[RMDB]
RNA sequence: GGGAACGACUCGAGUAGAGUCGAAAACGUAGGCUUGCACUUGCAUGGGUUUGCAUGACCCGGGAGAUGAACCCACCAUUGUCUUCCUCUUAUGCUUGGAUUGAAGGGAGCUCUACACCUCUCUCUCAGGACUCGAUAUCUUCGGAUAUCGAGUCCUAAAAGAAACAACAACAACAAC
Reactivity to 2A3 in 0.01 (KOAc 150mM, MgCl2 10mM, bicine 150mM(pH8.5), 24C), signal-to-noise 2, nucleotides 027 to 126: c060g070u070a020g060g040c030u020u090g000c060a040c040u030u050g040c020a050u080g010g000g010u000u020u130g160c100a060u140g040a000c040c000c000g000g020g000a000g020a080u060g070a060a120c060c010c000a000c030c030a120u060u040g060u060c020u040u010c000c000u060c000u060u160a110u110g050c020u010u010g190g020a120u010u120g030a000a090g060g000g000a000g000c000u000c000u010a010c020a040c010c000u020c000u000c000u000c020u030c050

Chemical mapping of a 177-nucleotide RNA with 2A3.
For 2A3, 958 sequencing reads were counted.
The reactions ran in a buffer of 150 mM KOAc, 10 mM MgCl2 and 150 mM bicine (pH 8.5), at 24 C.